Source: RMDB library OK2TRN, as collected in RNAgym. Chemical mapping of a 177-nucleotide RNA with DMS and 2A3. For 2A3 the reverse transcriptase was SuperScript II with manganese.
RNA sequence: GGGAACGACUCGAGUAGAGUCGAAAACAGGCGCUGGUGAGCCAGAUCGUGCCGCUGCUGGGGCCGAUGAUCCAGGACAUGCUGUUCAUGCAGCUGCGGCACAUGAUGGAGACGGAGGCCGUCAACGCCAUGCUUGGGUAUUCGUACCCAAGCAUGGAAAAGAAACAACAACAACAAC
Reactivity to DMS in 0.01 (KOAc 150mM, MgCl2 10mM, bicine 150mM(pH8.5), 24C), signal-to-noise 4, nucleotides 027 to 126: c080a150g000g010c050g020c020u000g000g020u000g000a110g020c020c020a050g000a140u000c040g010u000g000c020c000g010c000u000g000c010u010g010g000g000g020c100c130g000a090u010g010a020u000c300c030a080g000g020a180c150a100u010g000c040u000g010u000u000c080a060u000g020c000a010g000c010u000g010c010g020g000c000a020c020a020u000g000a180u000g000g000a140g000a130c100g010g000a170g000g000c010c000g000u010c050a060a140c200g020
Reactivity to 2A3 in 0.01 (KOAc 150mM, MgCl2 10mM, bicine 150mM(pH8.5), 24C), signal-to-noise 3, nucleotides 027 to 126: c050a050g000g010c020g010c050u090g000g070u080g050a060g050c000c000a030g000a050u050c050g000u000g000c000c010g000c020u040g000c010u010g000g010g050g120c090c050g050a050u080g000a030u060c060c060a020g050g080a090c050a170u250g050c030u040g040u110u120c040a050u190g100c000a000g000c020u040g000c000g000g000c010a010c000a000u030g010a020u040g020g030a060g020a030c020g040g090a050g070g070c050c000g020u020c040a040a040c050g000

About this RNA: The 2A3 profile rests on 5,206 reads. For DMS the reverse transcriptase was MarathonRT.